[RMDB]
RNA sequence: GGGAACGACUCGAGUAGAGUCGAAAAGAAAGAAAGAAAUCCUUGUCUCUCAUGAUGAAACCCUGUGCCUCUGAGCUGCCAUGAUUCUGGCUUCAAAGUAAACGCUCUGAAGAGACAGGCAGAGGAACAAGGGGGAACCUUUCGAGGUUCCCCCUUGAAAAGAAACAACAACAACAAC
Reactivity to 2A3 in 0.01 (KOAc 150mM, MgCl2 10mM, bicine 150mM(pH8.5), 24C), signal-to-noise 2, nucleotides 027 to 126: g110a000a020a000g070a000a130a040g100a030a160a040u060c000c000u040u030g080u020c000u000c000u000c050a110u130g080a030u070g000a110a100a100c000c010c000u030g080u150g080c030c000u000c000u040g030a050g000c020u000g000c030c000a070u260g010a210u300u060c020u060g000g040c000u040u050c060a060a050a000g060u070a060a060a080c050g000c000u000c000u030g040a080a080g040a000g000a010c000a000g010g060c020a040g000a020g110g000a070a060
Reactivity to DMS in 0.01 (KOAc 150mM, MgCl2 10mM, bicine 150mM(pH8.5), 24C), signal-to-noise 2, nucleotides 027 to 126: g000a080a050a130g000a050a050a020g000a180a170a090u010c040c000u000u000g000u000c020u010c020u000c040a150u020g000a150u010g030a150a110a160c150c030c010u000g020u010g000c000c010u000c030u000g000a040g020c000u000g000c000c060a130u040g000a260u020u020c170u030g000g000c020u030u030c080a080a050a090g000u010a090a160a140c210g000c050u000c070u010g000a030a050g000a050g000a030c000a000g000g000c060a060g030a050g010g060a050a150